[RMDB]
RNA sequence: GGGAACGACUCGAGUAGAGUCGAAAAUGGCUUGGCUUGAGUUGCCUAUGAAGGUCGUGGUAAGCUGCGAUAAGCUUGGGCGAGGAGCAUACAUCUUUGGAACCCAAGAUUGCCUAAUGGGACUUCCUUUGAUUAACGACUUCGGUCGUUAAUCAAAAAAAGAAACAACAACAACAAC
Reactivity to DMS in 0.01 (KOAc 150mM, MgCl2 10mM, bicine 150mM(pH8.5), 24C), signal-to-noise 2, nucleotides 027 to 126: u020g000g010c000u010u010g010g000c000u010u000g000a050g000u000u000g010c010c010u000a070u020g000a180a070g010g000u000c020g000u000g000g000u020a060a070g000c020u020g010c030g000a020u000a030a050g020c010u000u000g010g000g030c020g000a100g010g000a040g020c060a170u100a160c140a080u000c010u010u010u000g000g000a050a220c030c010c000a010a090g000a020u010u010g010c010c020u000a190a060u000g010g010g000a120c080u010u000c020c000
Reactivity to 2A3 in 0.01 (KOAc 150mM, MgCl2 10mM, bicine 150mM(pH8.5), 24C), signal-to-noise 3, nucleotides 027 to 126: u270g030g000c000u020u030g110g000c000u000u000g010a000g000u000u010g030c000c010u060a070u070g120a110a040g020g000u000c000g000u000g000g020u090a030a000g000c000u000g000c020g140a200u010a040a020g010c000u010u010g000g020g010c000g010a030g000g020a010g010c020a050u110a180c020a040u050c000u020u020u190g000g010a010a010c000c000c000a000a010g020a020u030u040g010c020c000u010a010a020u020g020g000g070a110c030u030u020c000c000